[RMDB]
RNA sequence: GGGAACGACUCGAGUAGAGUCGAAAACACUCUAAAAUUAUUUAGGUAAUUUAAUUGGAUGUGAUAUCAAGCACUAGUUUUGUUUGGAGGAGCAGAGAUUGAAAGCCUAGCUUUUACACCGGUUUGACCAAGAUUUUGUAUUCGUACAAAAUCUUGGAAAAGAAACAACAACAACAAC
Reactivity to 2A3 in 0.01 (KOAc 150mM, MgCl2 10mM, bicine 150mM(pH8.5), 24C), signal-to-noise 4, nucleotides 027 to 126: c020a010c010u090c010u050a070a100a080a090u130u090a110u070u180u120a020g010g000u030a100a170u000u030u070a060a040u070u070g220g130a040u050g020u000g000a010u030a010u080c010a010a010g000c000a020c030u100a140g120u150u190u070u010g020u000u010u020g020g020a000g000g010a010g000c020a000g040a000g000a020u030u060g050a040a020a010g000c000c010u020a030g010c050u060u100u020u120a080c080a020c040c030g100g020u010u050u070g040a020
Reactivity to DMS in 0.01 (KOAc 150mM, MgCl2 10mM, bicine 150mM(pH8.5), 24C), signal-to-noise 3, nucleotides 027 to 126: c050a060c060u020c030u020a070a060a030a050u010u030a030u020u010u010a050g010g000u000a060a100u010u010u010a020a090u010u000g000g010a170u020g010u000g010a200u070a050u010c020a020a020g010c020a020c080u010a070g000u040u030u010u010g010u000u010u010g000g020a010g010g020a300g020c000a010g000a150g000a050u000u000g010a070a040a180g000c000c010u000a020g000c160u000u000u000u000a070c070a100c120c060g000g010u020u000u000g020a190

Chemical mapping of a 177-nucleotide RNA with 2A3 and DMS.
Reactivities are given for positions 27 through 126.
As a SHAPE reagent, 2A3 marks flexible, mostly unpaired nucleotides at the ribose 2'-OH.